[RMDB]
RNA sequence: GGGAACGACUCGAGUAGAGUCGAAAAGGAGGACGAAGCAUAUUUCUGUUUCUGCAGGAUUAUUUAUAAUCUGCCGGAAAGUCUUGCAGGUGGCUGGGAUAUGUUCAGUCUGGUAGAAUUAAGCACGAAAACGUGUCCUUGUUCGCAAGGACACGAACAGAACUCAUUGGUUCGCCAAUGAGUUCUGAAAAGAAACAACAACAACAAC
Reactivity to DMS in 0.01 (KOAc 150mM, MgCl2 10mM, bicine 150mM(pH8.5), 24C), signal-to-noise 2, nucleotides 027 to 156: g000g020a170g020g010a030c050g020a250a160g030c020a040u000a010u000u000u000c020u010g020u020u000u000c010u000g000c000a080g000g000a020u000u000a060u000u010u020a110u000a080a070u000c070u000g000c060c100g040g000a080a050a080g010u000c020u000u000g000c010a000g020g030u000g010g000c020u000g030g010g000a050u000a020u000g000u010u000c050a210g030u000c000u000g020g030u000a090g020a060a130u000u000a050a150g020c050a120c050g000a060a060a110a110c000g020u000g000u000c010c000u010u000g010u000u010c290g050c030a020a010g000g000a000c000a000c030g010a010a100
Reactivity to 2A3 in 0.01 (KOAc 150mM, MgCl2 10mM, bicine 150mM(pH8.5), 24C), signal-to-noise 3, nucleotides 027 to 156: g070g030a050g010g010a000c000g020a030a000g010c010a010u010a010u000u020u000c010u010g020u010u050u010c010u000g000c000a000g000g020a000u000u030a050u030u290u060a090u070a090a210u090c040u200g100c090c020g050g030a140a030a010g000u010c000u000u000g000c010a010g060g070u130g120g000c010u030g000g000g000a000u000a000u000g050u120u060c070a000g010u000c000u000g000g030u050a030g100a070a050u100u110a070a040g080c020a030c140g070a040a070a100a030c010g000u000g000u000c000c010u020u010g030u050u090c160g000c170a000a000g000g000a000c020a000c000g010a010a000
This 207-nucleotide RNA was probed chemically with DMS and 2A3. The reactions ran in a buffer of 150 mM KOAc, 10 mM MgCl2 and 150 mM bicine (pH 8.5), at 24 C. For DMS, 3,226 sequencing reads were counted. 2A3 adducts were read by reverse transcription with SuperScript II with manganese. The 2A3 profile rests on 1,785 reads. For DMS the reverse transcriptase was MarathonRT.